[RMDB]
RNA sequence: GGGAACGACUCGAGUAGAGUCGAAAAGAUAUGGAUCGCGUACACUUCUUUGAUCGCUUUCGGAAACGAAAGCGGGAGAAGGUACCGAUCCUAAGUCAAAACGUUGGAUGCUUCGGCAUCCAACGAAUCUGUACGUAUUCUUCGGAAUACGUACAGAAAAAGAAACAACAACAACAAC
Reactivity to 2A3 in 0.01 (KOAc 150mM, MgCl2 10mM, bicine 150mM(pH8.5), 24C), signal-to-noise 3, nucleotides 027 to 126: g030a020u080a030u140g020g020a000u030c040g040c180g100u030a020c300a260c160u050u020c020u300u280u090g110a150u170c010g000c000u010u000u000c010g020g050a060a050a050c010g000a000a000a010g000c020g000g020g000a030g000a000a010g040g000u010a000c000c000g000a000u000c000c010u010a030a010g030u030c050a050a030a090a150c010g010u000u020g000g000a020u010g000c040u070u110c300g160g000c010a000u000c000c010a000a000c000g000a010a040
Reactivity to DMS in 0.01 (KOAc 150mM, MgCl2 10mM, bicine 150mM(pH8.5), 24C), signal-to-noise 3, nucleotides 027 to 126: g000a040u000a300u010g000g020a000u000c000g000c300g040u000a000c010a170c110u000u000c010u010u000u000g040a110u010c010g010c000u000u000u000c000g020g000a100a040a180c000g010a000a010a010g020c000g000g000g000a020g020a020a020g000g020u000a000c000c000g000a010u000c000c000u000a000a070g010u000c060a100a080a070a240c030g010u000u030g010g010a010u000g010c000u010u040c300g020g000c000a010u000c000c000a000a000c010g020a010a040